[RMDB]
RNA sequence: GGGAACGACUCGAGUAGAGUCGAAAAAUCCUGCCCUUCGGGGCAGGAUGCAGCUUCGCUCUUGAGAGCGCGACUUUAGAGGAAUCCCAACGCGCAGAAGCACUAUUUCUCAGUUCGCUGAGAAAAACAGACGGUAAUUAUUCGUAAUUACCGUCUGAAAAGAAACAACAACAACAAC
Reactivity to DMS in 0.01 (KOAc 150mM, MgCl2 10mM, bicine 150mM(pH8.5), 24C), signal-to-noise 5, nucleotides 027 to 126: a030u000c000c000u000g010c010c000c000u000u000c180g040g010g000g010c000a010g000g010a000u000g010c180a090g000c140u000u000c010g010c040u000c020u000u010g000a140g010a060g010c020g000c050g010a100c030u000u000u000a090g000a070g000g010a140a110u000c010c010c010a110a160c130g020c040g000c040a110g000a070a070g010c040a100c180u010a130u000u000u000c000u000c000a010g000u000u020c180g020c020u000g000a020g000a000a020a020a120a190
Reactivity to 2A3 in 0.01 (KOAc 150mM, MgCl2 10mM, bicine 150mM(pH8.5), 24C), signal-to-noise 6, nucleotides 027 to 126: a000u000c000c000u000g020c010c000c010u030u070c280g050g000g000g000c000a000g000g000a000u000g000c020a030g020c050u100u060c020g010c020u050c020u220u300g150a170g000a020g180c020g000c010g040a090c020u040u070u110a060g010a020g080g050a050a070u010c000c000c020a040a050c060g000c000g000c050a060g060a160a010g040c010a020c050u130a210u040u060u010c000u000c000a020g030u040u050c180g010c050u000g010a000g000a020a000a010a010a000